[RMDB]
RNA sequence: GGGAACGACUCGAGUAGAGUCGAAAAGAUAUGGAAUCGUGAUGGACAUGCCUUAGGGUCGGAAACGACCCGAAGGGCAACAGCCAUACGAUUCCUAAGUCAAAAGUUAAGACUUCGGUCUUAACAACGUUAUAGAACUCUUCGGAGUUCUAUAACGAAAAGAAACAACAACAACAAC
Reactivity to DMS in 0.01 (KOAc 150mM, MgCl2 10mM, bicine 150mM(pH8.5), 24C), signal-to-noise 3, nucleotides 027 to 126: g000a000u000a120u010g010g000a010a000u000c000g010u010g010a010u000g010g000a040c080a300u010g020c010c010u000u010a300g010g000g010u000c010g020g010a030a040a080c000g010a020c000c000c000g000a060a160g000g010g040c000a020a030c280a170g000c010c000a010u000a030c010g010a020u000u000c000c000u000a000a040g010u010c010a090a120a130a150g010u000u000a000a010g000a030c000u000u020c280g010g000u000c010u000u010a000a010c000a110a110
Reactivity to 2A3 in 0.01 (KOAc 150mM, MgCl2 10mM, bicine 150mM(pH8.5), 24C), signal-to-noise 3, nucleotides 027 to 126: g010a000u030a020u070g000g020a010a000u010c020g020u180g190a080u030g020g020a050c230a300u300g000c010c050u260u020a040g000g010g000u000c010g000g010a070a030a000c020g000a000c020c020c000g010a020a000g000g000g010c010a010a030c050a010g010c030c000a000u000a010c020g000a010u000u000c000c000u000a030a010g010u000c020a020a040a080a170g020u010u010a000a010g000a010c010u050u100c300g130g000u000c000u010u010a000a000c000a000a000